An RNA of 170 nucleotides, treated with 2A3 and DMS and read out base by base. For 2A3, 26,927 sequencing reads were counted. The RNA was probed in 150 mM KOAc, 10 mM MgCl2 and 150 mM bicine (pH 8.5) at 24 C. For DMS the reverse transcriptase was MarathonRT. 2A3 adducts were read by reverse transcription with SuperScript II with manganese.
RNA sequence: GGGAACGACUCGAGUAGAGUCGAAAAACAGACGCGAACCGUGAGUGGAACCCUCGAUCCUUUAUUGGGGGGUACACUCGAGGAGUGGAAGGCGGGGAGGAGGGGGCUGAGGGCUAACCUACGGAAAAUGCUACGUUGUUCGCAACGUAGAAAAGAAACAACAACAACAAC
Reactivity to 2A3 in 0.01 (KOAc 150mM, MgCl2 10mM, bicine 150mM(pH8.5), 24C), signal-to-noise 9, nucleotides 027 to 129: a000c070a030g110a040c040g020c030g060a050a020c010c010g040u060g050a040g010u060g030g040a080a050c000c000c000u010c010g060a110u130c020c130u240u280u240a140u170u120g010g010g000g010g010g030u090a030c040a030c030u020c000g020a040g000g010a050g010u220g030g060a080a040g100g050c080g020g000g000g000a120g040g000a100g010g010g010g000g020c040u060g020a040g000g000g000c000u010a030a070c000c010u030a040c030g060g000a050a050a010a040u180g020
Reactivity to DMS in 0.01 (KOAc 150mM, MgCl2 10mM, bicine 150mM(pH8.5), 24C), signal-to-noise 4, nucleotides 027 to 129: a030c120a070g040a090c020g010c000g010a100a080c000c000g000u040g000a050g060u030g020g010a140a120c020c000c020u020c030g050a060u040c130c140u040u120u040a080u040u050g010g010g010g010g010g010u020a060c040a060c020u010c040g020a070g000g000a070g000u000g000g000a050a060g040g000c070g040g000g020g020a040g040g020a120g050g010g000g030g000c030u030g030a050g010g010g000c050u000a070a050c060c020u000a090c030g010g020a060a070a080a040u010g010